Source: RMDB library OK2TST, as collected in RNAgym.
An RNA of 177 nucleotides, treated with 2A3 and DMS and read out base by base.
The RNA was probed in 150 mM KOAc, 10 mM MgCl2 and 150 mM bicine (pH 8.5) at 24 C.
Values are in units of 0.01, from 0 to 300, in steps of 10.
RNA sequence: GGGAACGACUCGAGUAGAGUCGAAAAGUCCAUGAUUUUGACCGCGCCGGUGUUGGUGAUCAUCACGUUAGCGGGUUUGAUGUCGCGGUGGAUAAUGCCAGCAUCGUGGCUGACCUGCAGCGCAUGGUCCAACUACUAGGUUCGCCUAGUAGUUGGAAAAAGAAACAACAACAACAAC
Reactivity to 2A3 in 0.01 (KOAc 150mM, MgCl2 10mM, bicine 150mM(pH8.5), 24C), signal-to-noise 6, nucleotides 027 to 126: g050u000c010c010a030u110g100a130u050u170u150u190g060a040c030c010g040c020g010c050c050g070g040u090g060u090u110g050g030u060g070a060u080c020a010u030c010a020c030g020u060u060a050g010c000g000g000g060u030u070u110g060a040u070g010u020c010g000c020g010g040u060g010g020a130u120a250a080u240g120c060c010a010g030c000a020u020c010g010u010g020g000c000u010g000a010c010c000u010g000c010a010g020c020g000c040a050u090g040g000
Reactivity to DMS in 0.01 (KOAc 150mM, MgCl2 10mM, bicine 150mM(pH8.5), 24C), signal-to-noise 8, nucleotides 027 to 126: g010u000c010c030a100u000g000a140u010u000u010u000g010a090c040c030g020c060g010c070c050g010g010u000g020u000u000g010g010u000g010a080u000c040a050u010c060a110c020g000u000u000a110g030c020g010g010g010u010u000u010g020a070u010g020u000c020g010c020g010g020u010g010g000a120u000a080a080u010g000c120c080a080g010c030a010u000c020g030u000g000g000c010u000g010a040c030c010u000g010c020a060g010c030g010c110a050u000g010g010

For DMS the reverse transcriptase was MarathonRT.